[RMDB]
RNA sequence: GGGAACGACUCGAGUAGAGUCGAAAAUAAUAUAUUGUUAAAUGGCAUUAAUAGUGGUACCACAUGUUCCACAGAUUUGCAGUUGCCUAAUACUGAAGUGGUUACUGGCAUUUGUGUCAAAUAUGACAUCCUUGAGUCAUUUCGAUGACUCAAGGAUAAAAGAAACAACAACAACAAC
Reactivity to 2A3 in 0.01 (KOAc 150mM, MgCl2 10mM, bicine 150mM(pH8.5), 24C), signal-to-noise 1, nucleotides 027 to 126: u000a010a010u160a030u180a150u300u100g010u070u030a040a160a140u080g000g060c010a010u030u080a040a060u010a040g050u000g070g010u000a000c000c020a000c050a160u150g020u010u000c070c000a070c000a050g090a050u040u040u090g000c100a110g080u150u180g110c020c090u050a090a060u120a270c060u090g030a130a020g000u010g000g030u110u060a010c030u010g000g000c000a000u000u030u030g030u030g000u000c040a140a030a000u090a080u120g050a000c010
Reactivity to DMS in 0.01 (KOAc 150mM, MgCl2 10mM, bicine 150mM(pH8.5), 24C), signal-to-noise 1, nucleotides 027 to 126: u010a050a110u000a100u000a110u000u000g020u020u030a050a060a150u000g000g000c010a010u000u000a050a040u010a040g020u000g000g000u000a010c000c050a040c060a110u040g010u010u010c040c120a180c140a110g000a110u000u000u010g010c060a100g030u010u010g000c050c110u010a050a020u000a110c040u000g000a120a130g020u000g010g010u010u000a000c010u000g030g000c030a010u000u000u010g000u040g000u010c000a020a060a070u000a050u000g000a080c180